[RMDB]
RNA sequence: GGGAACGACUCGAGUAGAGUCGAAAAGCGGCGCGGACCCCACGGUGCCCUCGCUGCCCUGGUGGGGUCGGAGGGGACCUCCGGGGUUGGGAGACUUUGUCUCCGGCGGAGGGAGGCGGCCCAGCAGUAACGUAACAACCUUCGGGUUGUUACGUUAAAAAGAAACAACAACAACAAC
Reactivity to DMS in 0.01 (KOAc 150mM, MgCl2 10mM, bicine 150mM(pH8.5), 24C), signal-to-noise 1, nucleotides 027 to 126: g030c150g010g050c040g000c110g000g010a000c010c000c030c010a080c180g020g010u000g010c020c020c050u000c040g000c120u000g010c010c010c010u000g000g020u010g000g000g000g000u000c270g000g000a050g000g010g000g010a050c010c020u000c210c100g000g010g010g010u000u000g030g030g030a030g010a030c020u010u000u030g010u000c010u000c000c010g000g010c030g000g000a140g010g000g000a110g000g000c050g010g000c040c010c040a120g000c100a150g000